[RMDB]
RNA sequence: GGGAACGACUCGAGUAGAGUCGAAAACAAUGCCUAUGUGUACACUUCACAAGGGUUUGUGGUGGUCAAUGGCAAAGUUUCUACACUUGUCAAACAAGUGUUAGACUUGCUUAAUAAGGGUAUGCAAACGGGUUAAGGUUCGCCUUAACCAAAAGAAACAACAACAACAAC
Reactivity to 2A3 in 0.01 (KOAc 150mM, MgCl2 10mM, bicine 150mM(pH8.5), 24C), signal-to-noise 9, nucleotides 027 to 129: c040a020a080u130g030c000c000u070a110u100g060u000g010u030a030c080a030c070u070u110c030a020c030a080a080g150g010g040u050u050u030g030u020g010g010u030g010g040u080c050a060a060u080g020g000c000a040a070a030g020u040u060u020c010u020a000c000a000c000u020u060g030u150c120a090a110a110c000a090a020g000u000g000u010u030a010g000a000c000u000u010g000c000u070u110a070a020u140a130a110g060g010g010u050a030u100g060c050a030a060a070c100g040
Reactivity to DMS in 0.01 (KOAc 150mM, MgCl2 10mM, bicine 150mM(pH8.5), 24C), signal-to-noise 9, nucleotides 027 to 129: c100a080a070u050g000c000c010u030a120u010g030u010g000u020a070c130a080c070u010u040c040a060c080a090a240g030g010g030u000u000u000g000u020g000g000u000g000g010u000c090a050a050u000g010g020c030a020a030a050g000u030u050u020c020u030a020c010a020c000u010u060g000u030c240a110a130a300c020a020a030g020u000g020u020u020a040g000a030c010u010u020g010c010u030u030a090a070u060a070a090g010g040g040u030a020u030g030c090a040a060a110c170g000
This 170-nucleotide RNA was probed chemically with 2A3 and DMS. DMS (dimethyl sulfate) methylates the pairing face of unpaired adenines and cytosines. For 2A3, 79,513 sequencing reads were counted. For DMS the reverse transcriptase was MarathonRT.